[RMDB]
RNA sequence: GGGAACGACUCGAGUAGAGUCGAAAACUCAAUUGCUUGGGUUUAAAAGUAGAGAAUCGUCCUAUCCAUCCUGACUGUCGGAUCGGUGCGGACUAAAACCAAAGACAGAAACUAAACAUGUAGAUUCAUGAGCGUAAUGCUGGCGGACGCGGGUUCACCCGUUUGAAAAGUUCGCUUUUCAAACGGGAAAAGAAACAACAACAACAAC
Reactivity to DMS in 0.01 (KOAc 150mM, MgCl2 10mM, bicine 150mM(pH8.5), 24C), signal-to-noise 1, nucleotides 027 to 156: c050u000c000a070a200u000u030g020c080u010u010g010g020g020u000u010u000a050a070a030a250g030u000a050g030a150g000a040a070u000c060g050u000c010c010u000a140u000c020c010a120u000c040c000u000g020a230c100u000g030u010c070g030g010a140u000c120g040g000u000g000c280g000g000a090c040u000a030a090a060a190c090c000a060a100a300g000a120c000a120g000a050a060a110c060u000a060a040a080c070a050u030g000u000a070g020a160u000u020c020a140u000g020a170g040c070g060u000a090a080u000g030c000u000g000g000c060g040g000a010c050g000c020g000g000g000u000u010c050a160
Reactivity to 2A3 in 0.01 (KOAc 150mM, MgCl2 10mM, bicine 150mM(pH8.5), 24C), signal-to-noise 2, nucleotides 027 to 156: c010u010c020a010a090u150u140g040c070u040u000g020g040g030u120u130u110a120a240a010a000g060u150a060g020a050g120a110a130u130c060g000u000c010c000u020a010u000c000c000a010u020c000c010u030g090a090c040u050g050u010c010g000g000a000u000c020g000g100u000g010c020g020g000a000c000u000a010a020a000a000c060c000a000a070a000g000a000c000a000g030a080a130a010c070u130a020a080a010c040a030u060g020u130a030g040a220u030u120c030a020u060g010a020g060c050g000u040a090a030u090g020c020u020g020g010c000g000g000a010c010g010c070g060g000g000u030u000c030a030
The record gives the reactivity of an RNA of 207 nucleotides to DMS and 2A3. Values cover nucleotides 27 to 156. For 2A3 the reverse transcriptase was SuperScript II with manganese. Reactivities are rounded to 0.1 and cut off at 0 and 3. Source: RMDB library ARCHII, as collected in RNAgym.